The record gives the reactivity of an RNA of 177 nucleotides to 2A3 and DMS. Conditions: 150 mM KOAc, 10 mM MgCl2 and 150 mM bicine (pH 8.5), 24 C. The 2A3 profile rests on 1,470 reads. For 2A3 the reverse transcriptase was SuperScript II with manganese.
[RMDB]
RNA sequence: GGGAACGACUCGAGUAGAGUCGAAAAAUGGCGCAGCUGCUCAUCUGUCUAACUUGGCUUGCGGCGUGGACCCCACUGCCCACCAGGGACUACCAGCGCUUCCCCCAGCUGGUGGUGCUCGACUGCACCUCGGCUUAAAAUUCGUUUUAAGCCGAGGAAAAGAAACAACAACAACAAC
Reactivity to 2A3 in 0.01 (KOAc 150mM, MgCl2 10mM, bicine 150mM(pH8.5), 24C), signal-to-noise 1, nucleotides 027 to 126: a030u060g030g000c050g000c040a020g020c040u080g000c020u090c110a150u030c020u080g090u060c010u060a030a100c060u080u100g000g060c050u030u080g030c050g000g000c030g000u050g040g040a160c020c030c010c010a020c030u080g040c000c000c000a000c000c000a050g000g040g020a000c000u000a010c000c000a000g040c020g000c010u130u120c000c000c010c000c000a020g000c010u030g030g000u000g000g000u090g060c000u000c000g060a020c020u030g010c010a050
Reactivity to DMS in 0.01 (KOAc 150mM, MgCl2 10mM, bicine 150mM(pH8.5), 24C), signal-to-noise 2, nucleotides 027 to 126: a110u010g000g020c070g020c050a040g000c040u000g020c050u000c050a080u010c090u010g000u000c080u000a070a110c070u000u000g010g010c080u010u010g020c100g040g000c030g040u000g010g010a140c060c050c010c020a090c060u010g010c020c000c020a090c080c080a120g010g000g000a080c040u000a030c010c000a020g000c030g010c130u010u000c020c000c010c010c040a270g010c030u000g010g050u000g000g010u000g000c000u010c050g000a120c110u020g010c160a170